[RMDB]
RNA sequence: GGGAACGACUCGAGUAGAGUCGAAAAUGGGGCUUAUUCGUAAGCCCCAAAUGAGAUAUGGAUCACCUAAGCUUUUGACGACGGAGUCGGAAACGACAUACGUCGAUAAGCUUAGGGUGAUCCUAAGUCGGAUCCAGGGACUGUUCGCAGUCCCUAAGUUUUUUGGUAUAUUCGUAUACCAAAAAACAAAAGAAACAACAACAACAAC
Reactivity to DMS in 0.01 (KOAc 150mM, MgCl2 10mM, bicine 150mM(pH8.5), 24C), signal-to-noise 1, nucleotides 027 to 156: u000g010g010g090g020c000u000u000a080u000u000c300g000u010a020a020g050c000c000c000c000a000a020a010u000g000a210g010a060u000a240u000g010g000a020u000c000a070c000c000u020a010a020g000c000u000u000u000u000g060a250c050g000a010c020g020g010a190g020u000c000g020g000a150a180a230c000g030a070c010a050u010a280c000g020u010c010g040a010u000a030a040g050c000u000u010a000g070g000g000u000g000a000u000c010c010u010a000a030g000u010c010g020g000a120u010c020c060a110g010g010g040a040c030u000g000u000u020c300g010c060a040g000u000c000c020c000u030a010a020
Reactivity to 2A3 in 0.01 (KOAc 150mM, MgCl2 10mM, bicine 150mM(pH8.5), 24C), signal-to-noise 2, nucleotides 027 to 156: u060g000g000g000g020c000u010u010a020u070u080c210g170u040a020a000g020c000c010c000c010a010a000a010u010g010a010g000a000u020a010u170g000g000a000u000c000a000c000c000u000a000a010g010c000u060u120u200u190g170a150c010g000a010c010g010g000a020g010u000c020g020g000a110a070a030c020g000a000c000a050u300a040c000g000u010c000g000a000u000a010a010g000c000u000u010a010g010g000g000u000g000a000u020c000c000u010a020a010g010u000c000g010g030a050u050c010c020a020g000g000g000a010c010u000g060u100u100c220g000c180a000g020u000c000c010c030u020a150a040
Description: An RNA of 207 nucleotides, treated with DMS and 2A3 and read out base by base. The data come from the RNA Mapping Database (RMDB), library RNAMAK. The 2A3 profile rests on 1,977 reads. The reactions ran in a buffer of 150 mM KOAc, 10 mM MgCl2 and 150 mM bicine (pH 8.5), at 24 C.